[RMDB]
RNA sequence: GGGAACGACUCGAGUAGAGUCGAAAAGAUAUGGAUACGGCUAGGGAGUAAUUCGGAAACGAAUUGACAUCGAUCUAGCGUAUCCUAAGUCAAAACAAACCCGUAUGCUUCGGCAUACGGGUUUGAACAACUUAGUAGUGUUCGCACUACUAAGUUGAAAAGAAACAACAACAACAAC
Reactivity to 2A3 in 0.01 (KOAc 150mM, MgCl2 10mM, bicine 150mM(pH8.5), 24C), signal-to-noise 2, nucleotides 027 to 126: g020a000u060a010u120g020g000a020u000a030c050g300g050c130u000a000g010g110g000a040g020u040a000a000u000u000c010g020g030a060a050a030c010g000a010a010u020u060g290a050c040a270u200c090g150a080u050c020u010a000g000c000g000u000a010u000c000c000u010a030a020g020u020c030a030a010a090a220c000a000a010a000c010c010c000g000u000a010u000g000c020u070u140c300g160g000c010a000u000a000c000g000g000g000u000u000u000g000a000a010
Reactivity to DMS in 0.01 (KOAc 150mM, MgCl2 10mM, bicine 150mM(pH8.5), 24C), signal-to-noise 6, nucleotides 027 to 126: g010a020u000a300u010g010g000a020u000a000c000g030g030c000u000a000g000g000g000a090g010u000a030a010u010u000c000g000g000a070a080a190c000g010a010a000u000u000g010a030c030a190u000c090g010a120u010c010u000a010g010c000g010u000a000u000c000c010u000a010a080g010u000c040a100a080a110a200c010a000a010a010c000c000c010g000u000a010u000g000c010u000u020c210g020g010c000a000u000a010c000g010g000g000u000u000u000g010a060a180